[RMDB]
RNA sequence: GGGAACGACUCGAGUAGAGUCGAAAAGAUAUGGACUAAGCUAGUCCGCUAUUCGGAAACGAAUAGAUGGACUUGGACCUUACAUGUCCUAAGUCAAAAGGAACUCCUCGUUCGCGAGGAGUUCCAAUCAUAUAGAAACGUUCGCGUUUCUAUAUGAAAAAGAAACAACAACAACAAC
Reactivity to 2A3 in 0.01 (KOAc 150mM, MgCl2 10mM, bicine 150mM(pH8.5), 24C), signal-to-noise 3, nucleotides 027 to 126: g030a000u100a050u190g000g000a010c020u030a000a020g060c020u000a010g020u000c000c000g000c010u000a000u010u000c010g000g050a080a070a060c020g010a010a020u050a020g130a160u130g000g010a000c010u050u080g040g070a080c030c030u050u090a070c080a220u200g010u010c000c010u030a140a040g080u030c050a000a020a080a150g020g000a010a000c000u000c000c010u000c000g020u040u060c300g010c010g130a000g000g000a000g000u000u000c000c000a000a000
Reactivity to DMS in 0.01 (KOAc 150mM, MgCl2 10mM, bicine 150mM(pH8.5), 24C), signal-to-noise 7, nucleotides 027 to 126: g010a060u010a300u010g000g000a040c020u010a060a060g000c050u000a020g010u000c000c000g010c000u000a000u000u010c010g010g000a110a100a170c010g010a020a000u000a010g010a050u000g020g010a010c000u000u010g040g000a120c260c030u000u000a080c300a140u010g000u000c000c000u010a050a150g010u000c060a070a050a150a130g010g000a010a000c000u000c000c000u000c000g010u000u000c210g040c010g000a000g000g010a000g010u000u000c000c000a010a040

An RNA of 177 nucleotides, treated with 2A3 and DMS and read out base by base. The data come from the RNA Mapping Database (RMDB), library TTRDEL. The DMS profile rests on 10,954 reads. The 2A3 profile rests on 7,995 reads. The reactions ran in a buffer of 150 mM KOAc, 10 mM MgCl2 and 150 mM bicine (pH 8.5), at 24 C.